[RMDB]
RNA sequence: GGGAACGACUCGAGUAGAGUCGAAAAACGCGCAGCACUCCGAUACGUCGGAGUGCUGCGCGAAUGAGGUCGAAGUGUACCCCGCGUGCCCACCAAUGGCGUAUCGGGGAAUGGAACCGACCGAGAAAUAAAAAGCAUAGUUCGCUAUGCUUUUUAUAAAAGAAACAACAACAACAAC
Reactivity to DMS in 0.01 (KOAc 150mM, MgCl2 10mM, bicine 150mM(pH8.5), 24C), signal-to-noise 1, nucleotides 027 to 126: a080c000g030c000g140c000a040g000c000a060c000u000c010c040g050a020u010a060c190g020u000c000g050g080a090g180u000g020c000u000g020c000g000c000g000a000a000u000g050a200g020g020u000c000g000a110a110g000u000g020u010a080c030c000c000c000g000c250g040u000g000c020c030c120a110c190c260a110a120u020g020g000c060g000u010a030u010c020g030g000g030g010a010a030u040g000g000a190a150c050c020g000a010c030c000g010a170g000a100a080
The data come from the RNA Mapping Database (RMDB), libraries RFM100 and RFMREP. An RNA of 177 nucleotides, treated with DMS and read out base by base. Reactivities are given for positions 27 through 126. The RNA was probed in 150 mM KOAc, 10 mM MgCl2 and 150 mM bicine (pH 8.5) at 24 C.